[RMDB]
An RNA of 177 nucleotides, treated with DMS and 2A3 and read out base by base.
RNA sequence: GGGAACGACUCGAGUAGAGUCGAAAAUUCAUUAAGCAGCGCUAACAAGGCGUACAAAUGCCGGGCCCAGCAGCUUUUUUGCAAUGGUGGGGCCUUAGCAGGGCGCCAGGCUAAUGAGGGUCACUCAGUAACACUUAGACUUCGGUCUAAGUGUUACAAAAGAAACAACAACAACAAC
Reactivity to DMS in 0.01 (KOAc 150mM, MgCl2 10mM, bicine 150mM(pH8.5), 24C), signal-to-noise 3, nucleotides 027 to 126: u020u000c000a050u010u010a050a040g020c020a120g000c010g020c020u000a080a110c170a090a100g040g000c000g010u020a100c240a080a110a120u020g030c030c050g000g000g000c000c010c000a100g010c020a070g000c020u000u010u020u010u010u010g010c040a100a110u000g000g040u000g010g010g000g010c000c010u010u020a040g020c210a070g030g000g020c000g040c010c010a090g000g020c000u020a010a020u000g000a050g000g000g000u020c110a120c060u010c070a230
Reactivity to 2A3 in 0.01 (KOAc 150mM, MgCl2 10mM, bicine 150mM(pH8.5), 24C), signal-to-noise 5, nucleotides 027 to 126: u020u020c010a010u010u020a070a020g010c020a010g000c020g000c030u070a100a090c050a120a100g020g000c020g060u100a070c090a040a230a040u170g000c000c000g010g000g000c000c000c000a020g080c010a010g010c040u160u110u110u120u300u210g060c070a140a120u070g090g100u050g020g050g020g060c000c000u010u040a040g010c060a020g020g000g000c010g000c010c020a100g160g010c010u010a010a000u020g000a020g030g030g030u070c010a020c100u040c020a010
It was measured as part of the RMDB libraries RFM100 and RFMREP.
The reactions ran in a buffer of 150 mM KOAc, 10 mM MgCl2 and 150 mM bicine (pH 8.5), at 24 C.
Reactivities are given for positions 27 through 126.